Overview:
The record gives the reactivity of an RNA of 207 nucleotides to 2A3. The RNA was probed in 150 mM KOAc, 10 mM MgCl2 and 150 mM bicine (pH 8.5) at 24 C. Source: RMDB library OK3TST, as collected in RNAgym.

RNA sequence: GGGAACGACUCGAGUAGAGUCGAAAAGGUGGCUGGGACUACAGCAGUGAACUAGAGGGAUGGAGUUUUGGCCUUCUGAAGCUUUCCUUCUCAGAGAGAGACAGAUAGUAAAGGAAGUAACAAAUAAUUCUACAAUAAGUGACUUGAAGAAAAAUAACUAAAUUUUAUCGUUCGCGAUAAAAUUUAGAAAAGAAACAACAACAACAAC
Reactivity to 2A3 in 0.01 (KOAc 150mM, MgCl2 10mM, bicine 150mM(pH8.5), 24C), signal-to-noise 1, nucleotides 027 to 156: g050g000u050g010g000c020u030g000g050g010a040c040u070a050c100a080g000c000a000g060u010g050a090a030c030u070a030g000a040g090g020g010a000u020g000g000a040g000u050u050u090u130g060g000c000c020u030u080c020u060g010a090a040g050c010u030u040u020c010c000u080u000c030u000c020a050g060a040g010a000g000a010g000a050c000a000g030a050u100a040g110u050a100a080a000g000g010a000a020g100u120a030a000c030a020a070a090u070a030a070u150u080c010u090a040c000a010a040u200a160a100g050u100g050a010c040u060u060g180a010a010g080a000a120a300a020a010u300a040a020